The record gives the reactivity of an RNA of 177 nucleotides to DMS. The data come from the RNA Mapping Database (RMDB), library OK2TRN. Conditions: 150 mM KOAc, 10 mM MgCl2 and 150 mM bicine (pH 8.5), 24 C. In probing experiments dimethyl sulfate is read out at A N1 and C N3, which are open when not base-paired.
RNA sequence: GGGAACGACUCGAGUAGAGUCGAAAACAGACAUGCACAUUCCAAUCACCGCUAUCAUUGUAUCUGCCCUAUGAUAAGCGCUGAAGACCCGGACAGACUACAACGGUAUGCAGAAAGACUUAAGAAAUCAGCCUACUAGGUUCGCCUAGUAGGCUGAAAAAGAAACAACAACAACAAC
Reactivity to DMS in 0.01 (KOAc 150mM, MgCl2 10mM, bicine 150mM(pH8.5), 24C), signal-to-noise 1, nucleotides 027 to 126: c050a080g000a010c210a090u000g000c060a020c070a160u000u020c020c000a170a140u010c010a100c120c040g040c030u010a040u010c010a060u020u000g000u020a080u000c050u000g000c030c050c020u000a070u010g000a050u000a040a120g000c050g010c020u030g030a140a080g020a140c080c070c050g010g000a000c030a050g000a080c100u000a050c110a040a060c070g020g010u000a050u000g010c000a050g000a070a020a080g010a030c050u000u000a120a110g030a040a080a030

The DMS profile rests on 621 reads.